[RMDB]
RNA sequence: GGGAACGACUCGAGUAGAGUCGAAAAGUGUAACCCACACACCAGAACAGGUUGGGCACGUCUUCGAGCAUGUGCGCCUUGUAGACAAAGCGAUCCCGAGGGUCGAUCUCGACGCCGUCGAGGCUGAACCUAGCACAUUCUUCGGAAUGUGCUAGGUAAAAGAAACAACAACAACAAC
Reactivity to 2A3 in 0.01 (KOAc 150mM, MgCl2 10mM, bicine 150mM(pH8.5), 24C), signal-to-noise 3, nucleotides 027 to 126: g050u030g000u090a110a070c010c030c000a010c000a000c000a020c030c040a030g110a170a070c030a040g000g070u070u010g080g010g030c050a010c030g020u010c020u110u120c050g080a070g030c050a060u090g040u090g100c050g060c030c010u010u070g060u040a030g030a050c080a050a080a030g000c030g050a060u050c000c030c000g030a130g020g000g010u030c020g010a050u030c000u010c020g050a050c050g190c090c070g050u090c050g020a050g040g000c020u040g010a010
Reactivity to DMS in 0.01 (KOAc 150mM, MgCl2 10mM, bicine 150mM(pH8.5), 24C), signal-to-noise 3, nucleotides 027 to 126: g050u000g000u000a120a150c070c050c020a170c120a050c030a120c070c090a080g010a120a090c120a090g000g000u020u010g010g010g000c040a020c110g000u010c030u000u010c150g010a080g000c090a080u010g000u000g030c070g010c050c020u000u000g000u000a030g010a050c060a100a100a110g000c050g000a100u000c040c000c020g030a120g000g010g010u000c020g000a060u010c010u000c010g020a100c140g020c100c080g020u020c080g010a090g000g000c060u010g010a180